RNA sequence: GGGAACGACUCGAGUAGAGUCGAAAAUCUAAGUAUUGUAAUGAAACCAAUUUAGUUGCUGAGAUGACUAGUUUAACAUGGCAUGAACAUAUUGGUCAGGGUUACAUCCAGAACAAAACCUCCAGGUGACAUCUGGUCUAGGGGCACCUGCUCAAGCAAUAAACACAACCUUCGGGUUGUGUUUAUUAAAAGAAACAACAACAACAAC
Reactivity to 2A3 in 0.01 (KOAc 150mM, MgCl2 10mM, bicine 150mM(pH8.5), 24C), signal-to-noise 2, nucleotides 027 to 156: u080c020u090a040a150g070u040a240u210u160g020u030a040a070u130g010a120a000a020c030c000a030a080u080u060u100a080g000u010u050g000c100u040g010a000g010a240u050g010a050c080u130a090g060u050u170u230a090a040c060a070u050g090g040c080a040u050g030a060a000c030a070u060a050u010u080g010g030u040c070a070g140g120g000u000u030a000c000a010u000c020c000a030g030a140a040c040a080a080a080a080c020c000u050c060c030a040g000g030u020g090a090c010a090u050c080u050g000g000u080c070u140a050g020g000g040g010c020a050c060c010u050g020c040u080c110a020a020g060c000
Reactivity to DMS in 0.01 (KOAc 150mM, MgCl2 10mM, bicine 150mM(pH8.5), 24C), signal-to-noise 1, nucleotides 027 to 156: u000c030u010a040a110g020u000a090u000u030g000u010a090a060u000g000a300a110a150c040c020a010a050u000u010u000a120g020u000u000g000c000u020g000a140g020a110u020g010a140c040u000a060g020u000u030u000a120a170c040a070u020g010g000c030a120u000g040a030a050c000a090u020a040u000u020g010g000u010c060a050g040g020g020u000u020a010c060a050u010c050c020a120g000a040a120c040a070a100a050a080c070c000u000c070c030a040g020g020u010g010a050c040a110u000c020u000g000g000u000c030u000a140g000g020g000g000c020a010c070c000u000g000c020u020c050a040a090g010c070